Structure probing data (DMS) for a 177-nucleotide construct. Conditions: 150 mM KOAc, 10 mM MgCl2 and 150 mM bicine (pH 8.5), 24 C. Source: RMDB library OK2TRN, as collected in RNAgym. Values are in units of 0.01, from 0 to 300, in steps of 10.
RNA sequence: GGGAACGACUCGAGUAGAGUCGAAAAGACCCUGGACCCCUUCCUCCAGGACAGGGAUGGACCAGUGCUGUGGGCAUGGCUGCAGGAGCCAGAACUUGAGCCAGCUGUGUGGGUGUGGCUGGGGUGCACAGUUUCUGCAGUUCGCUGCAGAAACUGUAAAAGAAACAACAACAACAAC
Reactivity to DMS in 0.01 (KOAc 150mM, MgCl2 10mM, bicine 150mM(pH8.5), 24C), signal-to-noise 1, nucleotides 027 to 126: g000a210c000c020c030u010g010g010a230c100c010c010c060u000u000c040c000u000c040c090a150g010g010a120c190a060g000g010g040a140u000g000g000a160c040c010a010g030u010g000c080u000g020u010g000g020g060c100a100u000g000g020c020u000g020c050a080g010g030a030g000c070c030a100g020a120a070c060u010u000g000a100g020c060c030a020g020c030u020g020u020g050u000g000g000g000u010g020u000g000g010c030u000g000g010g000g000u010g030c060